Chemical mapping of a 207-nucleotide RNA with 2A3.
The RNA was probed in 150 mM KOAc, 10 mM MgCl2 and 150 mM bicine (pH 8.5) at 24 C.
RNA sequence: GGGAACGACUCGAGUAGAGUCGAAAAAGCACGGUUUUUGAGGACGCUUUUUGUCCGUGCGGUAAUGCCCUCCUUUACACUUUCUCGCAUGGUGCGGGAGUGUGGAGAGGAAACAAAAGCUAGUCUCGAUAGGCGGUUAACUUCGGUUAACCGCCAAGGUACACCUCUAGUUCGCUAGAGGUGUACCAAAAGAAACAACAACAACAAC
Reactivity to 2A3 in 0.01 (KOAc 150mM, MgCl2 10mM, bicine 150mM(pH8.5), 24C), signal-to-noise 2, nucleotides 027 to 156: a000g010c010a010c010g030g000u010u020u010u010u010g050a070g000g000a000c030g000c030u000u040u000u000u000g060u060c010c000g000u010g000c020g050g060u180a080a070u230g030c000c000c000u030c000c000u000u010u020a010c010a000c000u040u200u000c030u010c000g070c030a090u210g260g100u300g150c010g000g000g000a010g000u000g010u010g010g000a070g000a010g010g010a020a010a010c060a000a020a000a010g000c010u070a070g000u010c000u010c030g040a180u210a130g000g000c000g000g000u010u000a010a000c010u030u060c200g050g000u010u000a000a010c040c000g000c000c000a000a000
Values cover nucleotides 27 to 156. The 2A3 profile rests on 1,352 reads. 2A3 adducts were read by reverse transcription with SuperScript II with manganese.